Structure probing data (2A3 and DMS) for a 177-nucleotide construct. The DMS profile rests on 2,088 reads. For 2A3, 3,909 sequencing reads were counted. For 2A3 the reverse transcriptase was SuperScript II with manganese. Conditions: 150 mM KOAc, 10 mM MgCl2 and 150 mM bicine (pH 8.5), 24 C. The data come from the RNA Mapping Database (RMDB), library TTRDES.
RNA sequence: GGGAACGACUCGAGUAGAGUCGAAAAGAUAUGGAUUGGUGUACGGGACAACAGCGCUCAUCGGAAACGAUGAGCGACAUGUCCGUACCCAAUCCUAAGUCAAAACAUUGGCCUUCGGGCCAAUGAACAUUUCGUUCCUGUUCGCAGGAACGAAAUGAAAAGAAACAACAACAACAAC
Reactivity to 2A3 in 0.01 (KOAc 150mM, MgCl2 10mM, bicine 150mM(pH8.5), 24C), signal-to-noise 1, nucleotides 027 to 126: g030a000u080a040u120g010g020a000u000u010g000g000u200g000u100a020c040g050g020g250a090c090a230a020c060a260g030c000g000c000u000c000a000u020c000g010g000a030a040a020c020g010a010u000g000a000g030c000g010a000c010a000u010g050u000c010c000g000u010a010c000c000c000a010a000u040c020c000u010a020a010g010u020c020a000a000a080a180c000a020u010u000g000g020c000c060u030u060c300g060g000g000c000c000a010a000u000g000a030a020
Reactivity to DMS in 0.01 (KOAc 150mM, MgCl2 10mM, bicine 150mM(pH8.5), 24C), signal-to-noise 2, nucleotides 027 to 126: g010a050u010a300u000g000g000a010u000u000g000g010u030g030u000a020c000g030g060g010a140c130a080a110c200a260g000c030g000c000u000c000a000u000c000g000g000a070a090a200c030g030a010u000g000a000g030c000g000a010c050a110u000g010u010c000c000g000u000a000c000c000c000a000a000u000c000c020u010a000a050g010u000c020a110a090a080a170c000a000u000u000g000g030c000c000u010u010c240g030g010g010c000c000a000a000u010g000a080a190